[RMDB]
RNA sequence: GGGAACGACUCGAGUAGAGUCGAAAAACCUUUGUGUACACGAUCCGUGUUGUCAGCUUCCAGGGACCCAUUGGGUCCCGGGAGGAAGCUUGGAUUUACACGGUAGAGUGUACACUCUGGUAAAACUAUUGUGGCCAGUUCGCUGGCCACAAUAGAAGUCAGAUAAUUGAUUCGUCAAUUAUCUGACAAAAGAAACAACAACAACAAC
Reactivity to 2A3 in 0.01 (KOAc 150mM, MgCl2 10mM, bicine 150mM(pH8.5), 24C), signal-to-noise 3, nucleotides 027 to 156: a000c010c000u010u020u010g000u000g000u000a000c000a000c010g010a020u010c010c000g000u000g000u020u010g000u000c010a010g010c000u010u000c000c010a050g000g010g000a000c000c010c050a300u230u300g060g000g000u000c040c040c130g000g040g000a040g000g000a000a000g000c000u010u110g020g000a000u170u260u110a000c000a000c000g010g000u030a010g020a010g010u010g010u000a000c000a000c000u010c000u000g020g020u020a040a040a010a090c000u000a010u000u010g010u010g010g000c020c000a020g010u080u120c180g090c180u000g000g010c030c000a000c000a000a000u000a000g010a000a010
Reactivity to DMS in 0.01 (KOAc 150mM, MgCl2 10mM, bicine 150mM(pH8.5), 24C), signal-to-noise 1, nucleotides 027 to 156: a070c000c000u000u000u000g020u010g010u010a020c010a040c020g000a300u000c000c010g010u000g000u000u010g000u010c010a120g000c000u000u010c010c010a050g000g000g020a040c000c020c030a220u010u020g020g000g010u000c000c000c000g010g000g000a160g010g000a020a030g000c020u020u000g010g010a020u000u000u000a050c010a010c000g010g030u020a060g010a300g000u000g000u000a010c020a030c030u000c030u000g000g030u000a050a040a130a150c010u000a000u010u000g060u010g030g000c020c000a030g030u000u010c300g010c050u010g010g000c000c000a000c000a010a020u000a000g000a070a180